[RMDB]
RNA sequence: GGGAACGACUCGAGUAGAGUCGAAAAUAUGGCCCUGAAUUACUACGUUUUAAAGAUCGUGGCGAUCGCCCGUUUGUAUUAGGUCCAACACAUGAAGAAGUUAUUACCGAUUUAGUUCGCCGUGAAGUGUGAUAGUGUUGUUCGCAACACUAUCACAAAAAGAAACAACAACAACAAC
Reactivity to 2A3 in 0.01 (KOAc 150mM, MgCl2 10mM, bicine 150mM(pH8.5), 24C), signal-to-noise 1, nucleotides 027 to 126: u210a130u090g050g000c000c000c000u020g090a020a010u110u040a050c030u020a020c040g080u020u040u070u300a140a060a070g030a020u070c020g020u130g120g070c020g060a050u030c050g020c040c000c010g060u020u190u170g010u020a050u000u040a100g000g020u000c020c010a000a000c000a010c020a070u070g020a030a080g000a050a000g030u010u090a060u110u000a120c000c020g000a030u000u000u130a090g100u020u040c030g040c060c020g020u050g020a110a010g110
Reactivity to DMS in 0.01 (KOAc 150mM, MgCl2 10mM, bicine 150mM(pH8.5), 24C), signal-to-noise 2, nucleotides 027 to 126: u010a060u000g020g010c060c030c050u000g010a060a090u000u010a060c050u000a030c030g000u020u000u010u010a020a190a190g000a010u000c000g030u000g010g020c040g010a050u000c080g000c090c050c020g000u010u020u000g020u010a090u000u010a070g000g010u000c010c030a050a100c180a070c150a090u010g010a050a050g000a130a070g000u000u000a070u010u000a070c070c040g000a150u010u010u000a080g010u000u000c040g000c020c030g020u010g000a060a070g020
Background
An RNA of 177 nucleotides, treated with 2A3 and DMS and read out base by base. 2A3 adducts were read by reverse transcription with SuperScript II with manganese. The reactions ran in a buffer of 150 mM KOAc, 10 mM MgCl2 and 150 mM bicine (pH 8.5), at 24 C.